[RMDB]
RNA sequence: GGGAACGACUCGAGUAGAGUCGAAAAAGUUCGCGCUUCCGUGAAACGCGAAAAUCGGACGGUGGGUGCAAGUCGCAUCGCAAAACCGCGGCAAGUGGAGUUAGCGAGAGGAGGCUGGGUUUUGGCUAGAACACACGGUACUUCGGUACCGUGUGAAACACGUACCUAAGUUCGCUUAGGUACGUGUAAAAGAAACAACAACAACAAC
Reactivity to 2A3 in 0.01 (KOAc 150mM, MgCl2 10mM, bicine 150mM(pH8.5), 24C), signal-to-noise 2, nucleotides 027 to 156: a000g050u010u000c000g000c000g030c060u060u060c060c070g120u080g110a080a080a050c060g000c010g000a050a010a010a060u130c060g000g000a020c050g020g030u090g040g030g010u010g010c030a030a060g060u080c030g020c080a070u030c040g010c090a030a040a050a040c040c050g010c010g090g000c080a120a030g000u090g040g020a090g020u090u130a010g050c030g050a030g000a010g070g010a010g030g030c050u020g000g000g040u050u080u040u100g000g000c000u030a080g060a220a010c010a000c000a000c010g000g000u000a000c010u070u070c200g030g000u000a000c010c010g020u000g000u000g000a000a000
Reactivity to DMS in 0.01 (KOAc 150mM, MgCl2 10mM, bicine 150mM(pH8.5), 24C), signal-to-noise 1, nucleotides 027 to 156: a080g030u000u000c000g070c010g030c010u010u000c030c280g000u000g020a080a060a020c030g030c020g020a010a030a060a100u010c000g000g000a080c020g000g010u030g000g040g010u010g000c010a090a150g040u010c120g000c010a100u010c020g020c050a080a040a080a130c080c030g010c020g030g020c060a100a140g000u000g010g010a140g020u020u010a200g020c010g010a140g040a080g040g020a040g020g010c030u010g040g040g000u000u000u030u000g030g020c030u000a160g010a080a270c040a000c010a020c010g040g000u010a020c000u000u010c300g050g020u000a020c000c000g010u010g010u000g020a040a070
Structure probing data (2A3 and DMS) for a 207-nucleotide construct. The reactions ran in a buffer of 150 mM KOAc, 10 mM MgCl2 and 150 mM bicine (pH 8.5), at 24 C. For DMS the reverse transcriptase was MarathonRT.